[RMDB]
RNA sequence: GGGAACGACUCGAGUAGAGUCGAAAAUGCGGGCAGCCGAGCUGGCCCGCAACGCCAGCAUUCCGGUGUUGGGCGUCAAUCUGGGCCGCAUCGGCUUUUUGGCCGAGGCCGAGGCGGAGGCAAUCGAGUCACCUAGUUUAUUCGUAAACUAGGUGACAAAAGAAACAACAACAACAAC
Reactivity to 2A3 in 0.01 (KOAc 150mM, MgCl2 10mM, bicine 150mM(pH8.5), 24C), signal-to-noise 2, nucleotides 027 to 126: u050g010c000g000g010g060c010a020g000c030c150g130a070g060c020u100g120g100c010c000c000g020c010a000a000c000g000c010c000a000g020c010a020u070u020c050c180g200g000u020g010u050u030g200g030g010c000g010u030c040a030a110u050c040u100g000g090g040c000c000g020c010a050u020c000g000g040c040u060u030u000u020u120g040g000c000c030g000a010g000g000c010c000g000a020g010g000c000g000g010a010g000g070c010a000a080u150c070g020a040
Reactivity to DMS in 0.01 (KOAc 150mM, MgCl2 10mM, bicine 150mM(pH8.5), 24C), signal-to-noise 4, nucleotides 027 to 126: u000g030c010g010g010g010c030a040g000c030c050g000a090g010c030u010g010g000c010c010c000g030c040a020a010c030g010c000c000a020g000c020a030u000u000c200c120g010g020u000g000u000u000g030g040g010c010g010u000c110a070a110u010c070u010g000g010g000c000c010g000c020a100u000c000g000g000c000u000u000u000u020u000g010g000c110c070g020a070g000g020c010c010g000a020g010g020c020g000g010a160g000g000c100a090a100u000c090g000a220
An RNA of 177 nucleotides, treated with 2A3 and DMS and read out base by base. 2A3 adducts were read by reverse transcription with SuperScript II with manganese. The reactions ran in a buffer of 150 mM KOAc, 10 mM MgCl2 and 150 mM bicine (pH 8.5), at 24 C. The 2A3 profile rests on 3,819 reads. Reactivities are given for positions 27 through 126. It was measured as part of the RMDB library OK2TST.